[RMDB]
RNA sequence: GGGAACGACUCGAGUAGAGUCGAAAAGAUAUGGAAUGUAAUCGACAUGCAUAGGGUCGGAAACGACCCAUAUGCAACAGCGAUGCAUUCCUAAGUCAAAACUGGUCCCGGUUCGCCGGGACCAGAACGUCCUUAUACCGUUCGCGGUAUAAGGACGAAAAGAAACAACAACAACAAC
Reactivity to 2A3 in 0.01 (KOAc 150mM, MgCl2 10mM, bicine 150mM(pH8.5), 24C), signal-to-noise 1, nucleotides 027 to 126: g000a000u000a000u100g000g000a030a020u000g000u070a300a300u030c030g070a120c140a220u300g000c000a000u020a020g010g000g000u010c000g010g000a030a000a000c020g000a000c000c030c040a000u020a000u000g000c030a120a060c010a030g050c020g000a000u010g000c000a000u000u060c000c000u000a000a000g000u000c030a000a010a200a290c000u000g000g060u030c100c110c160g020g020u090u050c300g080c070c000g000g000g040a000c000c000a000g000a000a000
Reactivity to DMS in 0.01 (KOAc 150mM, MgCl2 10mM, bicine 150mM(pH8.5), 24C), signal-to-noise 1, nucleotides 027 to 126: g020a000u000a090u050g000g000a010a010u000g000u000a030a060u000c000g020a030c080a100u020g010c000a000u000a020g000g020g030u000c000g020g040a000a000a040c000g020a000c010c000c000a030u000a000u000g030c000a060a120c230a240g010c030g000a030u000g000c040a020u000u000c010c000u000a010a100g000u000c000a170a030a130a200c000u000g000g000u010c000c000c000g030g000u000u010c300g010c010c000g010g020g000a000c010c000a000g000a060a130
This 177-nucleotide RNA was probed chemically with 2A3 and DMS.
The 2A3 profile rests on 1,980 reads.
High 2A3 reactivity points to a flexible backbone, as in loops and unpaired stretches.
DMS adducts were read by reverse transcription with MarathonRT.
2A3 adducts were read by reverse transcription with SuperScript II with manganese.